[RMDB]
RNA sequence: GGGAACGACUCGAGUAGAGUCGAAAAGAUAUGGAGCAGCAACGAUACAUUGCGGGAGCGCUAUAAUCGUAGGAAUCGGAAACGAUUCUACGGUAGCGUCGCAAUGUAUCGUUGCUGCUCCUAAGUCCUGAUACAAGUAGUUCGCUACUUGUAUCAGAAAAGAAACAACAACAACAAC
Reactivity to DMS in 0.01 (KOAc 150mM, MgCl2 10mM, bicine 150mM(pH8.5), 24C), signal-to-noise 7, nucleotides 027 to 126: g010a110u000a300u010g010g010a020g020c000a010g020c000a000a010c000g020a020u000a000c010a010u000u000g010c000g010g010g030a300g010c000g000c010u000a060u000a300a130u010c010g020u000a040g020g010a010a020u000c000g010g000a140a090a250c010g000a020u000u000c000u000a000c000g020g020u000a010g010c000g010u000c000g000c000a000a010u000g000u000a000u000c000g020u000u000g000c000u000g000c000u000c000c000u000a010a070g000u000c030
Source: RMDB library TTRINS, as collected in RNAgym. Chemical mapping of a 177-nucleotide RNA with DMS. For DMS, 17,552 sequencing reads were counted. Conditions: 150 mM KOAc, 10 mM MgCl2 and 150 mM bicine (pH 8.5), 24 C. Values are in units of 0.01, from 0 to 300, in steps of 10.